[RMDB]
RNA sequence: GGGAACGACUCGAGUAGAGUCGAAAAGUAUGUUCGCAUACCUGAAAACCUUUGUGGACCUGGAGAGGAAGAACUACUCACCUCCCAGCCCAUUGGGCUGUUGUGUGAGCUUCCUCGUUGAAAGGUCCACUCUGGUGUAAUGACGAUUCGUCGUCAACCCAAUAAUGCAAUUCGUUGCAUUAUUGGGAAAAGAAACAACAACAACAAC
Reactivity to DMS in 0.01 (KOAc 150mM, MgCl2 10mM, bicine 150mM(pH8.5), 24C), signal-to-noise 2, nucleotides 027 to 156: g050u000a040u000g000u000u010c230g060c030a080u000a070c010c030u000g020a090a070a090a040c000c020u000u010u000g040u010g010g000a010c000c010u010g030g000a300g040a040g010g030a060a060g010a090a160c050u000a200c010u010c020a090c000c020u000c080c070c020a030g010c010c020c010a240u000u020g020g020g000c000u000g020u020u000g010u000g010u000g010a060g030c030u000u000c000c010u000c010g070u010u000g020a150a160a050g000g010u000c000c010a000c010u000c010u010g020g010u020g010u000a060a080u010g000a010c020g030a100u000u000c210g050u000c000g020u000c010a040a300
Reactivity to 2A3 in 0.01 (KOAc 150mM, MgCl2 10mM, bicine 150mM(pH8.5), 24C), signal-to-noise 6, nucleotides 027 to 156: g020u010a010u070g040u030u120c210g000c130a010u020a050c010c040u120g080a120a080a030a070c000c000u000u010u000g000u010g000g010a000c010c000u000g010g010a020g010a000g060g000a010a010g000a040a050c070u150a050c000u250c000a000c000c010u020c030c070c020a010g030c000c000c030a300u200u300g010g000g000c020u000g010u060u050g170u040g000u000g090a000g000c000u010u010c000c000u000c000g000u020u030g000a000a000a000g000g000u000c000c000a000c000u000c000u000g000g000u010g050u080a120a230u110g000a000c000g010a020u040u090c180g050u020c000g000u000c140a030a150